[RMDB]
The record gives the reactivity of an RNA of 177 nucleotides to 2A3 and DMS. 2A3 adducts were read by reverse transcription with SuperScript II with manganese. High DMS reactivity at an A or C suggests that its Watson-Crick edge is free. Reactivities are given for positions 27 through 126. Reactivities are rounded to 0.1 and cut off at 0 and 3. Source: RMDB library OK2TRN, as collected in RNAgym. The DMS profile rests on 808 reads. The RNA was probed in 150 mM KOAc, 10 mM MgCl2 and 150 mM bicine (pH 8.5) at 24 C.
RNA sequence: GGGAACGACUCGAGUAGAGUCGAAAACGAACCUGCUUCGCGAACGCCUGCGAGCUCACCACCGCGCGGUUGAACCACGUGCCGACGCCGUCCUCGACAUGCGCGGGCAGCGUGAUCGCGCAGACGAACCCUCCGACGUAUUCGUACGUCGGAGGGUAAAAGAAACAACAACAACAAC
Reactivity to 2A3 in 0.01 (KOAc 150mM, MgCl2 10mM, bicine 150mM(pH8.5), 24C), signal-to-noise 1, nucleotides 027 to 126: c050g000a000a070c010c030u060g040c070u090u110c090g000c030g060a150a040c010g010c040c000u050g000c020g000a010g020c000u010c000a000c000c000a040c000c010g000c000g000c010g010g000u000u000g000a020a010c060c040a030c120g090u270g030c020c060g190a090c110g040c000c020g050u090c010c020u020c010g020a000c030a060u130g000c010g020c050g020g000g010c040a040g000c000g040u000g010a020u030c020g000c000g030c060a000g000a000c040g010a030
Reactivity to DMS in 0.01 (KOAc 150mM, MgCl2 10mM, bicine 150mM(pH8.5), 24C), signal-to-noise 1, nucleotides 027 to 126: c060g040a040a120c030c030u000g010c070u000u010c070g060c110g000a160a160c070g020c000c000u010g030c030g000a010g040c130u000c020a020c000c020a050c020c010g000c000g040c000g000g000u000u000g040a050a070c170c030a010c070g040u010g030c030c060g040a210c170g020c040c030g000u010c110c090u050c010g000a010c040a050u000g030c020g030c000g000g000g020c110a040g020c110g000u000g000a020u000c010g000c000g030c020a020g000a030c070g010a100